RNA sequence: GGGAACGACUCGAGUAGAGUCGAAAAGGGGUCUUGUGCGUUUGACGUUGGACCACGCAACAGCUAUACUGAAGCCUCCACGGUAUAGACAUGCGUGCGUCCAACCGAGCACAAGACGGAGGCACCCAAAACAGCACCGUCGUUCGCGACGGUGCUGCAAAUUUUGAGUCUUCGGACUCAAAAUUUGAAAAGAAACAACAACAACAAC
Reactivity to 2A3 in 0.01 (KOAc 150mM, MgCl2 10mM, bicine 150mM(pH8.5), 24C), signal-to-noise 1, nucleotides 027 to 156: g010g010g060g000u000c000u030u010g000u000g020c010g050u130u300u300g000a040c010g000u010u010g000g010a010c020c020a000c010g020c040a220a300c070a160g000c000u000a000u000a000c000u010g040a110a010g020c000c000u000c000c000a010c000g000g000u000a000u000a030g050a010c030a120u300g000c010g000u000g000c080g000u020c000c000a000a000c000c000g020a010g050c000a000c000a010a000g000a000c000g000g000a020g000g000c010a040c010c010c020a090a130a030a060c000a000g030c000a000c000c010g080u010c030g010u110u250c300g070c010g160a000c050g000g000u000g000c000u000g000